This 177-nucleotide RNA was probed chemically with DMS and 2A3.
2A3 adducts were read by reverse transcription with SuperScript II with manganese.
It was measured as part of the RMDB library RFMREP.
For DMS the reverse transcriptase was MarathonRT.
Reactivities are given for positions 27 through 126.
RNA sequence: GGGAACGACUCGAGUAGAGUCGAAAACCACAAUGAUGGCAAUAUUUUUCGUCAACAGCAGUUCACCUAGUGAGUGUUGAGACUCUGGGUCUGAGUGAAAUCGUCAAAAUGUUUCGACAUUUUGACGCGUGUAGGAUACCUUCGGGUAUCCUACACGAAAAGAAACAACAACAACAAC
Reactivity to DMS in 0.01 (KOAc 150mM, MgCl2 10mM, bicine 150mM(pH8.5), 24C), signal-to-noise 3, nucleotides 027 to 126: c010c000a080c220a080a110u000g000a070u000g010g030c080a080a070u000a070u000u000u000u010u010c080g020u000c050a050a100c080a060g020c060a040g000u020u010c060a070c020c040u000a080g020u000g000a040g000u000g010u000u010g010a160g000a050c040u010c050u010g010g000g010u010c040u000g020a090g000u000g000a050a040a050u010c010g010u000c000a010a010a010a010u000g000u000u000u000c200g020a010c000a000u000u000u000u000g000a000c000g000
Reactivity to 2A3 in 0.01 (KOAc 150mM, MgCl2 10mM, bicine 150mM(pH8.5), 24C), signal-to-noise 3, nucleotides 027 to 126: c020c010a010c050a030a140u160g050a030u050g030g020c050a110a040u040a230u170u160u030u080u110c060g030u020c040a060a050c010a060g020c000a010g040u090u070c030a040c050c030u080a050g110u040g130a020g020u060g100u110u110g040a080g030a030c030u050c050u060g040g000g030u000c040u090g030a040g020u120g030a060a070a060u070c020g010u000c000a010a000a010a010u020g020u000u090u060c150g070a020c000a000u000u010u000u000g000a000c000g000